Chemical mapping of a 177-nucleotide RNA with 2A3 and DMS. 2A3 adducts were read by reverse transcription with SuperScript II with manganese. The 2A3 profile rests on 3,622 reads. DMS adducts were read by reverse transcription with MarathonRT.

[RMDB]
RNA sequence: GGGAACGACUCGAGUAGAGUCGAAAACAUGCCACUGCACUCCAGCCUGUGUGACAGACAGAGUGAGACCCUGUUUUGGGUGGAGGAAAAAAAAAAGUUUGUGAGUUAGGGGUUAGAACAGAAGUACUAGAUACGUAUAGUUCGCUAUACGUAUCUAAAAAGAAACAACAACAACAAC
Reactivity to 2A3 in 0.01 (KOAc 150mM, MgCl2 10mM, bicine 150mM(pH8.5), 24C), signal-to-noise 3, nucleotides 027 to 126: c010a030u090g050c000c010a050c050u040g040c020a020c030u070c030c010a110g050c030c010u080g020u030g040u060g140a030c010a020g010a010c010a010g080a030g070u070g020a080g020a020c020c010c000u040g020u080u100u120u080g040g020g000u080g000g000a060g010g100a070a020a030a000a010a000a010a010a000a020g090u120u130u080g050u010g030a060g020u030u070a010g010g040g020g000u050u090a030g020a060a000c030a040g090a160a000g020u060a070c050
Reactivity to DMS in 0.01 (KOAc 150mM, MgCl2 10mM, bicine 150mM(pH8.5), 24C), signal-to-noise 8, nucleotides 027 to 126: c100a080u000g010c020c020a080c060u000g010c070a080c020u000c020c040a090g010c020c010u000g010u010g020u010g020a070c090a060g020a040c050a080g000a040g010u010g010a140g000a200c070c020c010u000g010u000u000u010u010g010g000g020u000g000g010a090g010g000a020a000a000a000a000a040a060a070a060a100g010u010u010u000g020u000g010a080g000u010u000a070g000g000g010g010u000u000a060g010a050a050c070a050g010a070a070g020u010a080c160